RNA sequence: GGGAACGACUCGAGUAGAGUCGAAAAGUCUUCGAAGCAGUUGCAAAGAAAUGCCCAGAUGGAGGACAGAGGGCCAAACCACCCCAGUGAAUUCAUAACAGGAGAUAACUUGCUUAAGACCUGACUGGCCUAGUAAUUCUUUCGAGAAUUACUAGGCAAAAGAAACAACAACAACAAC
Reactivity to DMS in 0.01 (KOAc 150mM, MgCl2 10mM, bicine 150mM(pH8.5), 24C), signal-to-noise 4, nucleotides 027 to 126: g010u000c020u000u000c090g020a050a110g010c040a070g010u020u010g010c080a060a110a090g000a040a080a110u030g000c010c020c030a120g020a080u010g000g000a070g000g000a160c050a060g010a180g000g000g000c050c080a030a070a100c080c080a130c060c020c010c020a110g030u020g000a110a070u030u000c040a030u010a070a130c090a060g010g000a060g000a060u000a020a060c050u000u010g000c030u000u000a060a050g000a080c020c040u000g000a070c060u020g010
Reactivity to 2A3 in 0.01 (KOAc 150mM, MgCl2 10mM, bicine 150mM(pH8.5), 24C), signal-to-noise 7, nucleotides 027 to 126: g010u010c020u030u040c070g060a040a010g000c020a020g020u090u070g050c040a100a100a040g110a050a100a040u120g020c000c000c000a030g030a070u070g020g020a040g010g030a020c020a030g090a130g020g020g000c010c080a080a070a040c040c010a030c000c000c000c010a020g010u020g240a030a080u090u060c020a030u060a230a080c050a090g040g010a050g010a080u070a060a050c030u060u130g010c000u040u040a040a020g010a030c000c010u030g010a050c040u050g070